Conditions: 150 mM KOAc, 10 mM MgCl2 and 150 mM bicine (pH 8.5), 24 C. The record gives the reactivity of an RNA of 177 nucleotides to DMS and 2A3. Values cover nucleotides 27 to 126. For DMS, 3,965 sequencing reads were counted. The 2A3 profile rests on 4,041 reads. High 2A3 reactivity points to a flexible backbone, as in loops and unpaired stretches. The data come from the RNA Mapping Database (RMDB), library OK2TST. DMS (dimethyl sulfate) methylates the pairing face of unpaired adenines and cytosines. 2A3 adducts were read by reverse transcription with SuperScript II with manganese.
[RMDB]
RNA sequence: GGGAACGACUCGAGUAGAGUCGAAAAUUGUCCACGAGGCUGAGAAUUCCGCGAAGCUCACGUAUCGCGAGGCACUGACCGUGCUCCAGUGGGCCGAAUCAGCCUGUACUUACCUUGCGAUGCACUGGAAGUGCAAAGACUUCGGUCUUUGCACUUCAAAAGAAACAACAACAACAAC
Reactivity to DMS in 0.01 (KOAc 150mM, MgCl2 10mM, bicine 150mM(pH8.5), 24C), signal-to-noise 5, nucleotides 027 to 126: u010u010g010u000c070c040a120c110g020a040g010g000c030u020g000a060g010a100a140u000u010c060c100g020c120g020a190a180g010c010u010c030a050c040g000u000a050u000c060g000c050g000a050g020g030c030a040c030u010g010a100c300c150g000u000g000c010u010c050c080a100g010u000g000g000g010c010c030g010a150a090u000c020a040g010c030c000u020g010u000a050c220u010u010a080c110c040u000u010g020c010g000a030u000g020c130a070c220u010g000
Reactivity to 2A3 in 0.01 (KOAc 150mM, MgCl2 10mM, bicine 150mM(pH8.5), 24C), signal-to-noise 3, nucleotides 027 to 126: u060u040g060u030c000c010a010c080g080a030g000g050c000u010g020a000g050a190a190u250u070c060c030g060c070g090a050a000g010c020u040c020a010c020g080u070a050u080c040g020c030g020a050g000g050c020a010c050u080g030a050c040c030g020u040g010c020u040c030c010a020g040u080g030g000g000c000c000g040a000a050u010c000a000g010c000c000u000g020u020a030c000u030u050a060c020c020u000u000g020c030g010a030u040g020c050a050c110u110g100